RNA sequence: GGGAACGACUCGAGUAGAGUCGAAAAGAUAUGGAGUGUAGGGAGCUCGUUGGUCGGAAACGACCGAUGGAGCAUCGAUCUACCUCCUAAGUCAAAAGCACUCUGGGACUUCGGUCCCAGAGUGCAAGCAUACAAUGGUGUUCGCACCAUUGUAUGCAAAAGAAACAACAACAACAAC
Reactivity to DMS in 0.01 (KOAc 150mM, MgCl2 10mM, bicine 150mM(pH8.5), 24C), signal-to-noise 1, nucleotides 027 to 126: g000a020u010a300u010g000g000a020g000u010g000u000a000g000g000g000a030g040c000u000c000g010u000u000g000g000u000c000g020g000a070a060a180c010g000a020c000c000g000a000u000g010g030a000g000c050a120u000c060g010a070u010c010u000a000c010c000u000c000c000u000a020a100g010u000c050a030a070a180a100g030c010a010c000u000c000u000g000g000g000a010c000u010u010c240g020g000u000c000c000c000a000g000a000g000u000g000c000a000a020
Reactivity to 2A3 in 0.01 (KOAc 150mM, MgCl2 10mM, bicine 150mM(pH8.5), 24C), signal-to-noise 1, nucleotides 027 to 126: g000a000u060a050u200g000g000a010g030u300g020u020a010g000g040g000a010g030c010u020c020g000u000u000g010g000u010c020g030g000a100a030a020c010g000a000c000c020g000a010u050g260g040a020g000c010a070u280c010g000a040u030c010u030a000c000c000u000c000c000u000a120a040g030u030c020a100a040a040a080g010c000a010c000u020c000u000g020g000g000a030c020u070u180c300g100g000u010c020c000c000a000g000a010g000u000g000c010a000a000